[RMDB]
RNA sequence: GGGAACGACUCGAGUAGAGUCGAAAAGCCUACUGAAGAUAUGCUUAUCUCCGUUGGGAGAAAGUUUUGUUUAAUUAGUCGUGUAUACUAUAGCUCGUGAGAGUGUAGGUAUACUAAAUCUUAAAAGCCUCUCACCAUGUUUCGACAUGGUGAGAGGAAAAGAAACAACAACAACAAC
Reactivity to 2A3 in 0.01 (KOAc 150mM, MgCl2 10mM, bicine 150mM(pH8.5), 24C), signal-to-noise 2, nucleotides 027 to 126: g040c000c000u080a100c140u160g090a090a000g000a130u130a080u300g060c000u030u170a240u140c020u000c000c040g220u300u140g240g000g000a030g060a000a000a000g010u000u000u220u080g100u000u110u070a130a190u040u040a100g040u040c010g040u000g000u050a000u000a000c000u000a000u270a190g000c000u000c040g090u160g010a060g000a000g050u000g120u080a000g000g000u000a000u000a000c000u000a000a000a060u080c050u030u270a000a000a000a090g020